[RMDB]
RNA sequence: GGGAACGACUCGAGUAGAGUCGAAAAACGGUGAACAAAUGCCGGUGCAGGUCGUCCAUCGCGUCGUCUUCUUCGCGGAUCUGGGCGGCCUUUUCCGGGUCGUGCGACAACACGACCUCUUGGGCACUGUGACUACCUUGUUCGCAAGGUAGUCACAAAAAGAAACAACAACAACAAC
Reactivity to DMS in 0.01 (KOAc 150mM, MgCl2 10mM, bicine 150mM(pH8.5), 24C), signal-to-noise 1, nucleotides 027 to 126: a110c050g000g010u000g000a070a100c180a050a050a130u000g010c100c010g010g030u010g030c140a040g000g020u000c010g020u000c010c000a060u040c030g000c000g040u000c080g010u010c130u000u000c020u000u000c010g000c010g020g010a140u010c270u000g030g000g000c010g000g000c000c000u000u000u000u030c010c040g000g000g010u000c000g030u000g010c040g010a130c300a180a220c000a000c010g000a010c000c030u010c030u000u000g000g000g020c040a050c110

Source: RMDB library OK2TST, as collected in RNAgym.
Chemical mapping of a 177-nucleotide RNA with DMS.
Conditions: 150 mM KOAc, 10 mM MgCl2 and 150 mM bicine (pH 8.5), 24 C.
DMS adducts were read by reverse transcription with MarathonRT.